The record gives the reactivity of an RNA of 207 nucleotides to DMS and 2A3.
It was measured as part of the RMDB library M2RFPK.

RNA sequence: GGGAACGACUCGAGUAGAGUCGAAAAGUGCCUCGUCGGCCCGGCAUGCCAACCUGAUCCGAAGUUCCAGGUGGUUUCUCUGGCCUUCCAGAGAGAUGCGCGUCGGAAGAACCGACGAACAAACCUUAAAACAAAACGACGUUCGCGUCGUUUUGAACAUCGUAGACAUGUUCGCAUGUCUACGAUGAAAAGAAACAACAACAACAAC
Reactivity to DMS in 0.01 (KOAc 150mM, MgCl2 10mM, bicine 150mM(pH8.5), 24C), signal-to-noise 1, nucleotides 027 to 156: g000u010g010c000c070u000c010g030u010c000g040g010c040c030c030g060g000c010a130u010g010c070c100a110a060c020c020u000g000a090u000c080c090g010a200a120g010u000u000c070c030a060g040g040u000g020g010u000u010u000c000u000c000u000g000g030c300c160u000u000c050c010a000g000a030g010a070g020a050u000g010c020g040c010g060u010c020g000g010a140a080g000a150a110c010c000g020a040c040g020a220a050c020a090a090a070c080c020u000u000a060a080a160a160c030a000a000a020a000c010g010a000c050g030u000u010c210g010c040g060u000c000g020u000u000u000u000g010a070a150
Reactivity to 2A3 in 0.01 (KOAc 150mM, MgCl2 10mM, bicine 150mM(pH8.5), 24C), signal-to-noise 3, nucleotides 027 to 156: g080u050g070c020c010u020c000g010u000c000g000g000c000c000c000g000g000c010a020u090g000c050c000a090a100c030c000u010g030a070u140c080c100g220a180a080g080u180u100c050c010a000g000g000u010g020g000u030u090u000c000u010c000u000g040g000c030c060u260u130c020c000a000g010a000g010a010g000a070u150g050c070g000c030g020u000c000g000g020a090a060g020a100a090c000c010g000a000c000g020a030a010c040a000a050a060c030c020u190u210a110a080a000a030c000a000a000a000a000c000g010a000c010g020u010u060c170g020c010g110u000c000g000u000u000u000u000g000a000a020
DMS (dimethyl sulfate) methylates the pairing face of unpaired adenines and cytosines.
For 2A3, 2,177 sequencing reads were counted.